The data come from the RNA Mapping Database (RMDB), library OK3TST. This 207-nucleotide RNA was probed chemically with 2A3. For 2A3, 814 sequencing reads were counted. As a SHAPE reagent, 2A3 marks flexible, mostly unpaired nucleotides at the ribose 2'-OH. The reactions ran in a buffer of 150 mM KOAc, 10 mM MgCl2 and 150 mM bicine (pH 8.5), at 24 C.
[RMDB]
RNA sequence: GGGAACGACUCGAGUAGAGUCGAAAAUCACCUGAUGGUAUGAUACUACUGUGGAUUUCAUAAUCAGAGAUGCAUAAAAGCUAAUAGGAAGCAAAGUAGAUAAAAGGACCAUGUGUUCGCUGUAGCUUCUGACAAGGCACAAGCUACCACUUCCACAAUCACUCAGCGAUUUCGAUCGCUGAGUGAUAAAAGAAACAACAACAACAAC
Reactivity to 2A3 in 0.01 (KOAc 150mM, MgCl2 10mM, bicine 150mM(pH8.5), 24C), signal-to-noise 2, nucleotides 027 to 156: u090c050a060c010c000u040g030a040u050g010g050u070a030u030g050a020u000a060c000u000a010c030u080g010u060g030g040a010u000u040u110c030a050u080a160a020u060c060a000g010a000g000a040u070g030c020a000u050a110a080a030a000g000c010u030a060a050u050a170g070g020a010a010g020c020a070a030a000g000u050a030g050a090u160a080a180a090a070g070g000a040c000c010a100u270g140u060g000u000u050c050g000c060u000g000u050a000g000c000u050u010c040u020g030a050c050a110a110g010g000c070a030c000a070a000g000c000u000a000c000c020a080c090u040u000c030c050a020c050a010